[RMDB]
RNA sequence: GGGAACGACUCGAGUAGAGUCGAAAAUUAACUAGCGUAGGGAACCAAGCAAAGAGGUAAGAAAUCCCACGGUAGAAGGCUUGGUUCGCGCCGCAGGAAGAAGAAGUCCCACUCCCUACGCCACAAAGGUAUUCUUGUUAUUCGUAACAAGAAUACCAAAAGAAACAACAACAACAAC
Reactivity to 2A3 in 0.01 (KOAc 150mM, MgCl2 10mM, bicine 150mM(pH8.5), 24C), signal-to-noise 3, nucleotides 027 to 126: u080u010a050a060c070u040a030g000c000g000u000a010g030g030g000a030a010c010c010a030a020g010c020a070a090a070g140a130g070g020u110a110a070g070a130a120a040u040c020c010c000a020c020g070g040u080a120g050a160a020g040g000c020u010u030g010g000u040u040c010g000c010g000c010c020g000c020a030g050g020a030a070g060a050a010g030a030a010g080u020c020c000c000a020c020u000c020c000c000u020a000c010g010c030c000a040c040a020a050a000
Reactivity to DMS in 0.01 (KOAc 150mM, MgCl2 10mM, bicine 150mM(pH8.5), 24C), signal-to-noise 4, nucleotides 027 to 126: u010u000a050a130c070u000a080g020c010g020u010a030g030g000g000a020a060c010c010a030a030g020c020a090a070a160g000a080g030g020u010a080a090g020a070a100a140u000c020c010c020a090c090g010g000u000a100g010a080a070g010g000c010u000u000g000g020u000u000c050g010c080g000c040c040g000c040a040g010g010a070a070g000a070a030g000a070a110g000u010c000c010c020a180c080u000c010c000c000u000a020c000g010c020c160a030c220a030a050a060